[RMDB]
Structure probing data (DMS) for a 177-nucleotide construct. Reactivities are rounded to 0.1 and cut off at 0 and 3. Conditions: 150 mM KOAc, 10 mM MgCl2 and 150 mM bicine (pH 8.5), 24 C. Values cover nucleotides 27 to 126. Source: RMDB library TTRINS, as collected in RNAgym.
RNA sequence: GGGAACGACUCGAGUAGAGUCGAAAAGAUAUGGAAUAUCGGACAGACUGUACCUUGACAUGAUGAGAGGUCGGAAACGACCUUUCUAUCAACAGCAAGUGUACAGUCUGUCCGAUAUUCCUAAGUCGGAAAAGAACUACUUCGGUAGUUCUUUUCCAAAAGAAACAACAACAACAAC
Reactivity to DMS in 0.01 (KOAc 150mM, MgCl2 10mM, bicine 150mM(pH8.5), 24C), signal-to-noise 2, nucleotides 027 to 126: g010a090u010a300u010g040g010a000a000u000a000u000c000g030g010a040c000a010g000a030c000u010g000u000a000c000c000u010u010g000a110c130a300u010g000a020u000g000a000g000a010g000g010u020c000g010g000a110a150a280c000g010a010c000c000u000u000u000c000u030a000u010c000a000a180c300a220g010c020a010a000g000u020g000u000a010c030a000g000u000c000u000g000u000c010c000g010a000u000a000u000u000c000c010u000a010a060g040u000c070